[RMDB]
RNA sequence: GGGAACGACUCGAGUAGAGUCGAAAAGCCCCGCCCGAACGCUGCGGUGGUCGCCCACUCGUGCAGGUAACUCACGAUGCUGGAACUUUGCGGCCCUAAGCACUGGAGAUGACCCUUGAGGGAGGUUAAUGUUAUUUCUGUUCGCAGAAAUAACAUUAAAAGAAACAACAACAACAAC
Reactivity to DMS in 0.01 (KOAc 150mM, MgCl2 10mM, bicine 150mM(pH8.5), 24C), signal-to-noise 6, nucleotides 027 to 126: g000c020c000c010c060g000c010c000c030g000a070a100c170g020c020u000g020c130g000g000u010g010g020u000c030g000c010c010c010a020c020u010c000g030u000g020c240a030g000g000u060a130a150c020u010c000a030c010g010a030u020g010c100u010g020g020a170a110c180u020u030u010g010c010g010g020c010c010c020u000a190a100g000c020a190c080u010g010g000a090g000a080u020g000a130c040c010c020u010u010g000a160g000g000g000a050g010g010u000u020
Reactivity to 2A3 in 0.01 (KOAc 150mM, MgCl2 10mM, bicine 150mM(pH8.5), 24C), signal-to-noise 9, nucleotides 027 to 126: g020c000c000c000c000g020c010c010c010g060a100a030c100g010c040u020g030c090g080g060u180g030g010u020c010g000c000c000c000a000c010u000c000g010u010g020c090a020g030g070u160a160a140c010u000c010a010c010g030a030u080g020c130u020g020g030a120a150c080u110u150u230g010c010g000g000c000c000c000u020a040a000g000c010a020c040u040g020g010a060g020a050u110g080a080c010c010c020u050u120g060a150g020g020g010a040g030g020u020u020